[RMDB]
RNA sequence: GGGAACGACUCGAGUAGAGUCGAAAAGAUAUGGAUCCCGCCCUCAUUGACCGUUGAAAUCACUUUGUAACGUCGGAAACGACGUUACAAAGUGAUGGAGGUCUUUGAGUAACAAGGAUCCUAAGUCCACUCUUUACAACUUCGGUUGUAAAGAGUGAAAAGAAACAACAACAACAAC
Reactivity to 2A3 in 0.01 (KOAc 150mM, MgCl2 10mM, bicine 150mM(pH8.5), 24C), signal-to-noise 1, nucleotides 027 to 126: g030a070u140a080u230g000g010a000u010c000c020c000g090c000c000c010u000c000a020u000u010g000a000c000c020g300u230u120g000a030a040a030u020c000a000c030u060u010u000g000u000a000a000c000g000u010c030g070g000a100a060a000c010g000a000c000g000u000u020a000c010a000a000a000g000u010g000a000u000g000g020a000g020g010u000c000u000u020u000g000a000g000u020a050a070c110a030a050g000g000a000u000c020c000u000a240a040g130u050c050
Reactivity to DMS in 0.01 (KOAc 150mM, MgCl2 10mM, bicine 150mM(pH8.5), 24C), signal-to-noise 4, nucleotides 027 to 126: g000a090u000a300u010g010g000a000u000c000c000c060g000c300c230c000u010c000a010u000u000g010a020c000c000g000u010u010g010a140a120a020u000c000a010c000u000u020u000g010u000a000a000c010g010u000c010g010g010a180a110a300c010g000a010c000g010u000u000a010c000a010a000a020g010u000g000a000u000g000g000a060g000g000u010c000u000u000u000g010a000g010u000a050a110c200a280a080g010g000a020u000c000c000u000a050a160g000u000c030
Conditions: 150 mM KOAc, 10 mM MgCl2 and 150 mM bicine (pH 8.5), 24 C. The record gives the reactivity of an RNA of 177 nucleotides to 2A3 and DMS. 2A3 adducts were read by reverse transcription with SuperScript II with manganese. Source: RMDB library TTRINS, as collected in RNAgym.